[RMDB]
RNA sequence: GGGAACGACUCGAGUAGAGUCGAAAAGAGACGGUAUCUGAGACAAGAUACCGGGCCCUACGGGGCGCAGCAGGCGCGAAACCUUUACACUGCACGCCAGUGCGAUAAGGGGACUCCAUCUGCGAGGGUAAUUAUGCAUCUUCGGAUGCAUAAUUACAAAAGAAACAACAACAACAAC
Reactivity to 2A3 in 0.01 (KOAc 150mM, MgCl2 10mM, bicine 150mM(pH8.5), 24C), signal-to-noise 2, nucleotides 027 to 126: g100a010g040a030c010g000g000u000a010u000c010u030g050a030g060a130c100a210a150g010a010u000a000c010c000g000g050g010c020c000c000u010a040c100g030g000g000g000c010g010c010a020g010c000a020g000g070c060g000c040g080a030a000a030c000c000u020u010u000a040c060a040c040u040g030c080a060c140g050c090c020a030g000u000g010c030g070a050u020a060a000g030g000g010g030a040c020u010c020c020a070u010c010u000g030c030g050a100g010g090
Reactivity to DMS in 0.01 (KOAc 150mM, MgCl2 10mM, bicine 150mM(pH8.5), 24C), signal-to-noise 3, nucleotides 027 to 126: g020a140g020a150c010g000g000u000a010u000c000u000g010a250g020a170c230a120a050g000a000u010a000c000c000g010g010g000c000c010c010u000a060c160g030g010g010g030c010g010c120a080g020c050a030g000g020c130g000c140g020a040a200a200c010c010u000u000u010a090c060a040c070u010g020c020a100c120g030c220c100a070g020u010g000c070g010a100u000a010a040g000g000g000g010a250c050u020c020c010a050u000c030u000g010c020g010a160g010g010
Conditions: 150 mM KOAc, 10 mM MgCl2 and 150 mM bicine (pH 8.5), 24 C. Chemical mapping of a 177-nucleotide RNA with 2A3 and DMS. The 2A3 profile rests on 2,198 reads.